[RMDB]
RNA sequence: GGGAACGACUCGAGUAGAGUCGAAAAAUCCUCAGGUUCAUAAGCGUGAUGAUUGGGUGUUCAUGCUCCAUGCAUGACAUGUGCCUCCUUUGAACCUUGUUACGACCUUGGCACAUUACCCAGCUGAAAAAGACGUUCGCGUUCGCGCGAACGUCAACGCAAUUAGCUUCUUCGGAAGCUAAUUGCGAAAAGAAACAACAACAACAAC
Reactivity to 2A3 in 0.01 (KOAc 150mM, MgCl2 10mM, bicine 150mM(pH8.5), 24C), signal-to-noise 1, nucleotides 027 to 156: a000u000c010c010u060c010a000g000g000u000u000c000a000u020a280a060g040c090g120u050g210a100u100g060a110u070u100g070g000g000u130g050u100u050c010a000u030g020c070u100c250c090a110u280g000c000a000u000g000a010c010a000u010g030u030g010c010c020u000c010c010u000u000u010g000a000a000c000c000u040u140g090u000u130a090c040g000a110c020c060u140u050g000g000c010a010c000a010u000u090a010c000c010c010a000g030c170u070g010a020a000a000a090a090g000a000c000g010u000u000c000g000c000g020u000u010c170g100c000g000c000g080a000a000c000g000u000c000a000a000

Structure probing data (2A3) for a 207-nucleotide construct. The 2A3 profile rests on 504 reads. Conditions: 150 mM KOAc, 10 mM MgCl2 and 150 mM bicine (pH 8.5), 24 C. The data come from the RNA Mapping Database (RMDB), library M2RFOK.